[RMDB]
RNA sequence: GGGAACGACUCGAGUAGAGUCGAAAAUCUAAACCUUUGCACGAGUAAUUAAAGAUCCGCUUGACGAGCCUAUAUGGAAGAGCGUGCCAGGUAUUUGACUUAAGGACUGUUAGUAACUGAAGACCUGGAAUGUAAGCGGUUUCGACCGCUUACAUUCAAAAGAAACAACAACAACAAC
Reactivity to 2A3 in 0.01 (KOAc 150mM, MgCl2 10mM, bicine 150mM(pH8.5), 24C), signal-to-noise 2, nucleotides 027 to 126: u030c010u060a070a000a110c000c010u010u060u240g000c020a000c000g000a020g050u280a210a230u070u090a050a050a000g080a080u050c090c000g030c000u080u150g000a040c000g010a010g000c000c000u160a140u010a060u300g000g010a020a030g110a030g220c000g000u000g000c000c000a000g000g000u050a230u000u010u050g060a010c010u020u240a130a040g040g010a000c000u020g000u200u100a030g070u110a160a080c000u020g040a080a000g000a010c000c000u020g080
Reactivity to DMS in 0.01 (KOAc 150mM, MgCl2 10mM, bicine 150mM(pH8.5), 24C), signal-to-noise 2, nucleotides 027 to 126: u010c050u000a130a090a110c070c010u010u040u030g000c010a000c000g020a060g020u020a160a050u000u000a010a060a100g020a110u000c080c010g010c000u030u020g000a020c070g000a050g060c000c080u000a020u000a070u030g010g050a000a030g000a010g000c000g020u000g030c050c170a000g000g000u000a040u050u000u000g010a110c030u000u010a100a050g030g020a130c080u000g000u030u040a110g000u010a060a160c120u000g020a090a070g030a100c090c010u020g000